[RMDB]
RNA sequence: GGGAACGACUCGAGUAGAGUCGAAAAUUAAAAUUUGAGGCAUCAAGUGGAAGGGUAGUCGGCAGGGUCAAGGUCGGGAAGAAUGAGGACUCUAAACCAACCAACCUUAUGAGUGGAAUACAAAAAACUAUACCAAGUGAUUCGUCACUUGGUAUAGAAAAGAAACAACAACAACAAC
Reactivity to 2A3 in 0.01 (KOAc 150mM, MgCl2 10mM, bicine 150mM(pH8.5), 24C), signal-to-noise 2, nucleotides 027 to 126: u080u030a000a050a040a090u090u090u100g040a030g000g060c010a050u040c040a080a070g030u020g110g030a080a030g050g000g000u050a020g070u040c020g030g000c020a020g040g040g010u020c010a030a020g030g010u050c040g020g010g010a060a030g020a050a050u180g040a020g000g050a010c020u060c030u080a080a090a100c030c010a000a040c000c010a020a060c010c050u120u100a080u170g030a020g030u040g000g060a070a040u160a080c020a050a080a010a020a020a010
Reactivity to DMS in 0.01 (KOAc 150mM, MgCl2 10mM, bicine 150mM(pH8.5), 24C), signal-to-noise 3, nucleotides 027 to 126: u000u000a070a060a090a100u000u000u000g000a080g000g000c090a080u000c070a060a090g020u000g010g010a090a120g000g010g010u000a040g010u000c070g020g000c090a060g010g000g000u000c070a040a040g000g010u010c050g010g000g000a100a050g000a050a050u020g000a120g000g010a060c090u000c050u000a030a090a140c050c020a070a110c030c040a050a050c080c040u010u010a080u010g000a070g030u000g010g000a060a040u010a050c090a010a020a080a030a040a080